Notes:
Conditions: 150 mM KOAc, 10 mM MgCl2 and 150 mM bicine (pH 8.5), 24 C. An RNA of 177 nucleotides, treated with 2A3 and DMS and read out base by base. It was measured as part of the RMDB library OK2TST.
RNA sequence: GGGAACGACUCGAGUAGAGUCGAAAAGUUGACUCCUACAGCCCAGAAAAUUCAGUCAACAGCAACAGGAACCAUGUGACUUUCUCAUUUUAUCCUUUUGACAAUUCUAUGAGUUAAGGUGGGAUCACGUAAUCAGCAGGUUCGCCUGCUGAUUACGAAAAGAAACAACAACAACAAC
Reactivity to 2A3 in 0.01 (KOAc 150mM, MgCl2 10mM, bicine 150mM(pH8.5), 24C), signal-to-noise 1, nucleotides 027 to 126: g010u020u030g010a020c010u060c020c020u000a030c050a050g000c020c010c020a010g160a030a150a040a020u150u020c040a010g000u000c010a010a010c010a020g080c000a000a100c010a050g000g080a060a030c030c040a050u110g030u080g120a080c050u050u200u010c010u020c020a070u090u020u030u060a080u060c050c040u080u040u070u130g080a050c030a070a000u070u000c050u060a120u180g060a070g060u030u040a030a000g090g000u010g010g000g000a020u040c030a010
Reactivity to DMS in 0.01 (KOAc 150mM, MgCl2 10mM, bicine 150mM(pH8.5), 24C), signal-to-noise 1, nucleotides 027 to 126: g020u000u000g020a020c030u000c150c040u000a100c200a140g000c040c000c020a180g000a110a080a080a080u000u010c200a080g000u000c040a000a040c050a140g020c050a020a030c050a050g020g000a060a040c050c080a040u000g030u000g000a120c150u000u000u000c010u000c040a000u000u000u000u020a070u010c120c040u000u000u000u020g000a090c160a100a080u010u000c040u000a100u020g000a140g000u000u020a030a070g000g040u000g010g010g020a070u020c090a030